Chemical mapping of a 177-nucleotide RNA with 2A3 and DMS. For DMS the reverse transcriptase was MarathonRT. The RNA was probed in 150 mM KOAc, 10 mM MgCl2 and 150 mM bicine (pH 8.5) at 24 C. For 2A3 the reverse transcriptase was SuperScript II with manganese. For 2A3, 1,345 sequencing reads were counted.

RNA sequence: GGGAACGACUCGAGUAGAGUCGAAAAGAUAUGGAUUCUGCUGCUUGGAUUUAGGCUCCCCACCUCGGAAACGAGAGGCCUUGUCAGCAGACAGAAUCCUAAGUCAAAACUUGCGUUCGCGCAAGAACACAGUUCGUUUGUUCGCAAACGAACUGUGAAAAGAAACAACAACAACAAC
Reactivity to 2A3 in 0.01 (KOAc 150mM, MgCl2 10mM, bicine 150mM(pH8.5), 24C), signal-to-noise 1, nucleotides 027 to 126: g020a020u110a050u190g000g000a000u010u000c020u050g030c000u000g010c020u170u300g230g010a170u300u300u190a000g020g000c000u050c040c000c000c000a030c010c010u030c010g090g050a100a120a070c040g020a020g010a000g000g030c030c000u000u000g000u000c010a020g020c000a020g100a130c020a010g000a000a000u000c000c000u000a080a020g040u000c050a010a010a160a190c000u020u000g040c020g060u070u120c300g000c020g000c080a010a010g020a090a020
Reactivity to DMS in 0.01 (KOAc 150mM, MgCl2 10mM, bicine 150mM(pH8.5), 24C), signal-to-noise 1, nucleotides 027 to 126: g010a040u000a300u000g000g000a020u000u000c010u000g000c000u000g010c020u000u010g050g020a020u000u010u020a020g020g020c000u010c070c030c000c010a300c040c000u010c000g010g010a050a080a120c000g000a010g000a220g040g000c000c000u000u030g000u000c020a030g010c000a000g000a140c000a000g000a040a040u000c000c000u000a010a060g010u020c000a110a100a150a160c010u000u000g000c010g000u010u020c180g010c030g000c000a000a010g030a110a260